RNA sequence: GGGAACGACUCGAGUAGAGUCGAAAACGAGCUGCAUACGUGCAGCUCGAAUAAGAAUAUAGUGUUACUGAUCAACACUUUAAUCAAAGAUCAGAAUAAAAAACGUCGUGAUUACGAUCACGACGAAGAUAUACCUGGGGUUCGCCCCAGGUAUAUCAAAAGAAACAACAACAACAAC
Reactivity to 2A3 in 0.01 (KOAc 150mM, MgCl2 10mM, bicine 150mM(pH8.5), 24C), signal-to-noise 9, nucleotides 027 to 126: c010g000a000g010c010u010g000c000a020u030a100c240g130u020g000c000a000g010c000u000c000g000a010a000u090a040a020g080a070a050u300a060u270a170g000u000g000u000u010a140c010u000g000a000u000c000a000a020c000a000c010u230u180u040a030a030u060c090a140a020a020g000a010u000c000a000g070a040a030u210a020a070a000a000a000a010c010g000u000c000g000u000g000a010u020u070a080c270g070a020u000c000a000c000g010a000c000g000a010a010
Reactivity to DMS in 0.01 (KOAc 150mM, MgCl2 10mM, bicine 150mM(pH8.5), 24C), signal-to-noise 2, nucleotides 027 to 126: c000g020a000g000c000u000g000c020a000u000a100c130g070u000g030c000a000g030c000u000c000g000a050a030u020a130a070g000a140a100u010a070u020a010g050u000g000u010u000a080c030u000g000a000u000c000a020a000c020a010c000u000u000u100a000a000u010c090a090a060a100g000a000u000c000a000g070a300a070u040a010a160a030a120a060a050c020g020u020c010g020u020g000a020u000u000a110c140g020a060u020c000a010c020g000a040c020g000a030a000
An RNA of 177 nucleotides, treated with 2A3 and DMS and read out base by base. For DMS, 2,586 sequencing reads were counted. The RNA was probed in 150 mM KOAc, 10 mM MgCl2 and 150 mM bicine (pH 8.5) at 24 C. For DMS the reverse transcriptase was MarathonRT. The data come from the RNA Mapping Database (RMDB), library OK1LIB.